Chemical mapping of a 207-nucleotide RNA with 2A3 and DMS.
For DMS the reverse transcriptase was MarathonRT.
The RNA was probed in 150 mM KOAc, 10 mM MgCl2 and 150 mM bicine (pH 8.5) at 24 C.
2A3 is a SHAPE reagent: it acylates the 2'-hydroxyl of flexible nucleotides of all four kinds.
It was measured as part of the RMDB library OK3TST.
RNA sequence: GGGAACGACUCGAGUAGAGUCGAAAAACAUCUCACUGGGAAGUGAGAUGUGAGUCAGCACGGGAGUGCUGACAGUCGAUUUGUCUUCUAUGCCUAAAGACAAGAGGAGAACGAGAUGUACGGGAGUAGAUCGAGUUCUGCUCGAGGAAAGGCCAACUAAUCAUCACUAGUUCGCUAGUGAUGAUUAAAAAGAAACAACAACAACAAC
Reactivity to 2A3 in 0.01 (KOAc 150mM, MgCl2 10mM, bicine 150mM(pH8.5), 24C), signal-to-noise 6, nucleotides 027 to 156: a000c000a000u010c000u000c000a000c010u040g030g080g100a130a020g020u000g000a000g000a000u000g010u000g000a020g000u000c000a000g020c000a010c020g120g060g070a200g010u000g000c000u000g000a000c000a000g100u080c040g060a100u040u030u080g060u020c040u030u000c020u080a130u140g030c010c010u120a180a110a010g080a040c020a010a020g010a010g050g040a020g000a010a010c030g010a010g020a070u030g040u270a010c020g070g080g040a150g020u020a030g010a050u000c010g010a000g020u000u000c000u010g020c000u010c010g010a030g000g050a140a120a020g050g020c010c010a050a030c030
Reactivity to DMS in 0.01 (KOAc 150mM, MgCl2 10mM, bicine 150mM(pH8.5), 24C), signal-to-noise 3, nucleotides 027 to 156: a040c000a010u000c000u000c000a020c000u010g050g030g020a300a040g020u000g000a010g010a010u000g010u020g000a090g010u000c000a020g010c020a010c010g040g040g000a300g050u000g000c000u000g000a010c000a050g000u000c030g000a110u010u000u010g000u000c020u000u020c080u000a160u000g000c020c010u000a060a120a110g010a130c020a070a210g000a080g000g010a080g010a020a060c020g020a300g000a050u020g010u010a110c030g030g040g020a240g020u000a080g020a030u000c030g000a300g000u000u000c020u000g000c000u000c000g000a250g010g000a060a140a070g010g000c030c070a050a140c120